[RMDB]
RNA sequence: GGGAACGACUCGAGUAGAGUCGAAAAGAUGCCCAGGUCGGACCGCGGGGAGGUGGAGAUGCCAUGCCGACCCGAAGAGGAAAGAAGGACUCGGACGCGAACCCGUAAGGUGAAACUUUCACAUUUAGUUAGUUAAUAAGUUCGCUUAUUAACUAACAAAAGAAACAACAACAACAAC
Reactivity to 2A3 in 0.01 (KOAc 150mM, MgCl2 10mM, bicine 150mM(pH8.5), 24C), signal-to-noise 4, nucleotides 027 to 126: g070a040u150g030c000c000c000a030g030g060u050c020g000g010a030c030c020g000c000g020g000g000g020a020g000g040u070g020g040a140g010a100u140g090c040c020a050u080g020c020c000g020a040c010c000c010g010a050a010g070a040g010g030a110a030a040g040a020a020g040g020a020c010u000c040g010g030a020c030g020c010g020a050a050c020c010c010g040u050a040a060g060g010u030g010a040a020a040c040u070u130u070c030a020c000a050u030u030u030a040
Reactivity to DMS in 0.01 (KOAc 150mM, MgCl2 10mM, bicine 150mM(pH8.5), 24C), signal-to-noise 5, nucleotides 027 to 126: g000a100u010g010c010c010c010a130g010g000u010c030g000g010a140c070c060g010c020g020g000g000g000a170g000g020u010g010g010a140g010a080u010g010c050c050a070u010g010c010c010g010a180c030c010c030g000a070a080g000a110g010g010a080a060a080g010a080a100g000g000a050c080u010c060g010g010a070c070g010c050g010a070a100c030c020c030g010u000a070a060g020g010u000g000a070a110a110c160u010u000u000c040a050c070a140u000u000u010a110
Description
This 177-nucleotide RNA was probed chemically with 2A3 and DMS. 2A3 adducts were read by reverse transcription with SuperScript II with manganese. Source: RMDB library 15KREP, as collected in RNAgym.